An RNA of 207 nucleotides, treated with 2A3 and DMS and read out base by base. The reactions ran in a buffer of 150 mM KOAc, 10 mM MgCl2 and 150 mM bicine (pH 8.5), at 24 C. It was measured as part of the RMDB library OK3TST. Reactivities are given for positions 27 through 156. As a SHAPE reagent, 2A3 marks flexible, mostly unpaired nucleotides at the ribose 2'-OH.

RNA sequence: GGGAACGACUCGAGUAGAGUCGAAAAGUAUGUUACGAUUAUGUGACAAGCCAUAAUCGAUGAAGGUACUCGACUUCAUCGUAACAUAGAAUUGUCAGUGCGUACUGGCUUGUCACAGUACGGCAGACUACACUCCUAGUCUGCCACUGACUAGGAGCAUGGUCAUCAUAUUCGUAUGAUGACCAUGAAAAGAAACAACAACAACAAC
Reactivity to 2A3 in 0.01 (KOAc 150mM, MgCl2 10mM, bicine 150mM(pH8.5), 24C), signal-to-noise 8, nucleotides 027 to 156: g040u030a020u090g030u040u150a050c030g010a200u110u070a070u140g000u000g010a000c000a000a000g000c000c000a130u140a110a070u130c020g000a000u030g010a010a010g040g010u080a080c050u050c100g080a030c010u010u000c000a000u010c000g010u010a020a020c020a060u160a070g220a190a150u170u130g060u130c080a060g140u070g260c080g070u070a050c050u020g000g000c000u000u010g000u010c010a010c000a000g000u000a000c000g010g020c020a020g000a050c000u050a030c070a040c030u000c000c000u000a000g010u000c020u050g150c020c000a030c020u020g000a000c000u000a000g010g000a000g000
Reactivity to DMS in 0.01 (KOAc 150mM, MgCl2 10mM, bicine 150mM(pH8.5), 24C), signal-to-noise 3, nucleotides 027 to 156: g020u000a040u000g010u000u000a060c030g010a110u010u000a070u000g020u000g010a050c010a020a040g020c100c020a080u000a120a130u010c020g000a060u000g010a030a040g010g010u000a150c210u010c100g010a130c010u000u000c030a010u010c010g040u020a040a060c030a060u000a090g010a090a180u000u000g000u010c040a220g020u000g000c020g020u010a090c190u000g020g020c010u000u000g000u000c020a000c000a010g020u000a040c030g020g010c000a060g010a100c020u010a070c090a180c060u000c020c020u000a010g000u000c000u000g020c060c070a010c040u010g000a020c020u000a040g010g010a080g030